[RMDB]
RNA sequence: GGGAACGACUCGAGUAGAGUCGAAAAACAGGUUUAAGGGUUAAUGUGCUGCCUCUAGCAGGGUGAUGAGGGUUUGGUCACAGCUGUUUAAGCUGUAUUAGCCGAGAUGUAGGAGACACUUUAGUGUGUUCCCUUGGCUUUUCUGGAAGCCUGGCAACGCUAAAUGCUGAUUCGUCAGCAUUUAGCGAAAAGAAACAACAACAACAAC
Reactivity to 2A3 in 0.01 (KOAc 150mM, MgCl2 10mM, bicine 150mM(pH8.5), 24C), signal-to-noise 3, nucleotides 027 to 156: a000c040a050g030g050u060u090u130a060a050g040g030g020u090u100a110a050u190g030u080g070c030u020g030c000c040u030c070u060a070g050c100a040g010g010g010u050g040a050u060g030a060g050g010g000u090u090u090g050g010u070c040a000c010a030g000c010u010g100u270u170u200a030a000g000c010u000g000u010a040u010u120a020g000c010c010g030a030g000a070u160g090u200a070g020g040a100g040a030c000a000c040u100u110u090a240g060u130g000u010g020u110u070c020c000c000u000u020g000g000c000u000u030u050u080c030u010g100g030a000a030g010c000c010u010g060g020c060a060a050
Reactivity to DMS in 0.01 (KOAc 150mM, MgCl2 10mM, bicine 150mM(pH8.5), 24C), signal-to-noise 2, nucleotides 027 to 156: a100c070a050g050g030u000u000u000a090a080g010g000g000u000u010a070a130u010g030u000g060c010u000g000c000c010u000c080u000a130g020c050a130g020g010g040u000g010a110u010g000a100g010g010g000u000u000u000g010g000u000c090a050c040a030g010c000u000g010u000u000u010a080a060g020c010u000g000u000a070u010u000a070g020c020c020g020a070g000a120u010g020u010a070g020g030a110g010a030c030a020c030u000u010u040a160g040u010g010u000g030u000u010c000c010c010u000u000g000g020c030u000u000u010u010c080u000g010g010a070a100g010c020c010u000g000g020c040a080a100